Chemical mapping of a 177-nucleotide RNA with 2A3. The reactions ran in a buffer of 150 mM KOAc, 10 mM MgCl2 and 150 mM bicine (pH 8.5), at 24 C.
RNA sequence: GGGAACGACUCGAGUAGAGUCGAAAAUACACUCCGUCGAUGCUGGGCCCAAAGGCGAAGCCAAACUCCGGCGGACGAAUGGGCACGCUGAGCAGCUGGUCCAGUGUCUUUUCGCGCAGGCACUAAACACGCUACGCUCAUUCGUGAGCGUAGCGUGAAAAGAAACAACAACAACAAC
Reactivity to 2A3 in 0.01 (KOAc 150mM, MgCl2 10mM, bicine 150mM(pH8.5), 24C), signal-to-noise 1, nucleotides 027 to 126: u130a000c020a020c030u110c000c000g080u010c090g000a000u060g000c000u010g020g000g070c010c020c000a100a000a000g110g010c110g010a000a100g000c080c030a170a000a030c060u050c000c000g080g000c000g160g000a010c030g100a070a110u100g000g000g060c010a000c000g000c030u000g010a020g000c060a090g000c130u110g030g010u000c000c000a000g040u000g000u010c010u060u050u040u060c000g000c000g000c040a030g030g010c030a010c030u080a000a150a000